[RMDB]
RNA sequence: GGGAACGACUCGAGUAGAGUCGAAAACUCCACGCUGGGUAAUGGACGACGGCGGCGUGUGGCGAACAGGGAUACCGGUAGUCAGUGUCUGGAACAUCCCAAGGGUCGGCGGAGCUAGCACCCCGACAAAACGGGCACAAGUUCGCUUGUGCCCGAACGUAGGUUAUUACUUCGGUAAUAACCUACGAAAAGAAACAACAACAACAAC
Reactivity to 2A3 in 0.01 (KOAc 150mM, MgCl2 10mM, bicine 150mM(pH8.5), 24C), signal-to-noise 3, nucleotides 027 to 156: c030u030c020c020a030c060g030c040u040g030g000g090u140a140a130u110g040g020a050c050g000a010c010g060g060c010g000g010c030g020u120g020u050g020g030c040g000a090a070c070a130g030g000g020a010u040a100c010c030g010g040u060a050g060u040c070a020g030u040g050u060c020u060g020g020a040a070c030a090u040c000c000c030a060a050g110g020g000u000c010g020g010c120g030g010a030g030c020u050a020g000c040a080c000c000c000c000g000a000c000a010a050a020a030c000g000g000g000c000a000c000a000a000g020u060u110c170g010c130u000u020g000u000g000c000c000c000g000a010a000
Reactivity to DMS in 0.01 (KOAc 150mM, MgCl2 10mM, bicine 150mM(pH8.5), 24C), signal-to-noise 1, nucleotides 027 to 156: c100u000c010c010a060c040g000c050u000g010g010g030u010a140a030u000g010g000a080c070g000a060c060g010g020c040g000g020c000g040u000g020u010g030g030c020g000a080a070c050a150g040g010g030a160u000a090c020c020g060g020u000a090g010u000c090a040g020u000g010u010c110u000g010g020a080a110c190a090u000c010c000c020a120a070g000g000g020u000c010g000g020c030g010g000a180g050c090u000a130g040c070a090c020c010c000c020g040a080c020a000a030a110a120c080g000g000g060c000a020c010a020a080g010u010u000c300g010c030u000u000g030u000g000c020c020c000g020a000a000